Record summary: The record gives the reactivity of an RNA of 177 nucleotides to DMS and 2A3.
RNA sequence: GGGAACGACUCGAGUAGAGUCGAAAAUACUGAUCCGAAGGCAGCAGUGCCGGUCCUGCUGUUCAGCUUCGUUUUCUGUUUGAUUGUGGACAAUGGUUUUAAGACUAUGACCGGCCCGAUGGCAGAGCUAUCAAAGACGUUUCGACGUCUUUGAUAGAAAAGAAACAACAACAACAAC
Reactivity to DMS in 0.01 (KOAc 150mM, MgCl2 10mM, bicine 150mM(pH8.5), 24C), signal-to-noise 7, nucleotides 027 to 126: u010a110c090u000g010a080u010c080c020g020a090a090g010g010c010a020g000c010a010g010u000g020c000c000g000g010u000c010c010u000g010c010u000g010u010u000c130a140g010c090u000u000c060g010u000u000u000u000c030u000g000u000u000u010g010a130u010u000g020u010g010g000a070c160a080a080u000g000g000u000u000u010u010a090a160g010a060c060u000a050u000g010a020c000c000g010g000c000c050c040g010a040u000g010g010c060a080g000a150g000
Reactivity to 2A3 in 0.01 (KOAc 150mM, MgCl2 10mM, bicine 150mM(pH8.5), 24C), signal-to-noise 3, nucleotides 027 to 126: u130a020c030u030g040a040u050c010c000g020a010a020g040g010c010a000g020c000a000g010u000g000c020c000g010g000u000c000c000u000g000c000u010g010u100u120c050a050g010c040u010u030c010g080u050u030u110u000c060u050g150u050u100u120g150a180u080u080g050u080g090g010a020c050a070a070u040g030g080u010u020u070u160a130a060g060a030c010u030a070u120g000a000c000c000g000g010c000c000c000g010a020u020g010g000c020a010g020a010g090